Source: RMDB library TTRDES, as collected in RNAgym. Chemical mapping of a 177-nucleotide RNA with DMS and 2A3. For DMS the reverse transcriptase was MarathonRT. The 2A3 profile rests on 23,120 reads. Conditions: 150 mM KOAc, 10 mM MgCl2 and 150 mM bicine (pH 8.5), 24 C.
RNA sequence: GGGAACGACUCGAGUAGAGUCGAAAAGAUAUGGACGGUCAAGGGAGCUCGUACUCGGAAACGAGUACUGAGCAUCGAUCUUGAACCGUCCUAAGUCAAAAGACCUAACAGUUCGCUGUUAGGUCAACUCUUUUAGAAGGUUCGCCUUCUAAAAGAGAAAAGAAACAACAACAACAAC
Reactivity to DMS in 0.01 (KOAc 150mM, MgCl2 10mM, bicine 150mM(pH8.5), 24C), signal-to-noise 6, nucleotides 027 to 126: g010a010u000a040u000g000g000a010c000g010g000u000c000a010a010g010g010g000a060g030c000u000c010g010u000a000c000u000c000g020g000a010a010a020c000g010a020g010u000a000c020u020g020a010g030c000a130u000c280g000a050u000c010u000u000g000a060a100c000c010g020u000c000c000u000a010a060g000u000c010a120a100a130a150g000a010c000c000u000a010a010c000a010g010u000u010c300g030c000u000g010u000u000a000g000g010u000c010a010a070
Reactivity to 2A3 in 0.01 (KOAc 150mM, MgCl2 10mM, bicine 150mM(pH8.5), 24C), signal-to-noise 4, nucleotides 027 to 126: g000a010u020a000u050g010g000a000c010g000g000u000c000a000a000g030g030g060a110g050c000u000c000g010u000a000c000u010c010g010g010a010a010a000c000g000a000g000u000a000c010u040g000a000g000c010a010u080c020g020a050u010c000u010u000g020a080a030c010c000g000u000c000c000u000a000a000g010u000c000a000a020a020a180g010a010c000c000u000a010a000c000a010g080u150u190c260g110c150u010g000u000u000a000g070g000u000c000a000a000